[RMDB]
RNA sequence: GGGAACGACUCGAGUAGAGUCGAAAAGAAGGCGAUCAGAUACCGCCCUAGUUUUAACCAUAAAAGAUGCCAGCUAGCAAUUGGGUGUAGCUACUUUAAUCGAUCAUUCAUUCAGUCGCUUCCCGGGACGUGGGAUUAUUUUCGAAUAAUCCCACGUAAAAGAAACAACAACAACAAC
Reactivity to DMS in 0.01 (KOAc 150mM, MgCl2 10mM, bicine 150mM(pH8.5), 24C), signal-to-noise 4, nucleotides 027 to 126: g010a140a140g020g000c040g020a070u030c060a110g010a100u020a070c090c060g000c030c020c040u010a050g020u000u020u020u010a080a180c100c050a080u020a080a080a070a120g000a080u010g010c030c030a030g000c070u010a060g010c060a030a060u020u010g010g010g000u000g020u000a080g000c020u020a080c060u000u010u000a040a130u000c030g000a020u010c050a120u040u000c020a030u010u010c050a020g000u000c000g010c190u000u000c000c000c000g030g010g020
Reactivity to 2A3 in 0.01 (KOAc 150mM, MgCl2 10mM, bicine 150mM(pH8.5), 24C), signal-to-noise 9, nucleotides 027 to 126: g100a050a040g030g000c030g030a080u150c110a070g070a140u110a100c020c030g020c010c000c000u020a060g020u020u040u040u120a080a060c040c020a080u160a100a110a020a020g090a030u110g040c030c020a020g030c060u060a010g020c030a080a160u120u130g040g000g000u050g020u040a010g010c020u030a030c010u040u020u090a070a050u040c010g020a010u020c020a070u170u040c010a010u040u000c000a010g000u000c000g070c190u010u000c000c000c000g000g040g010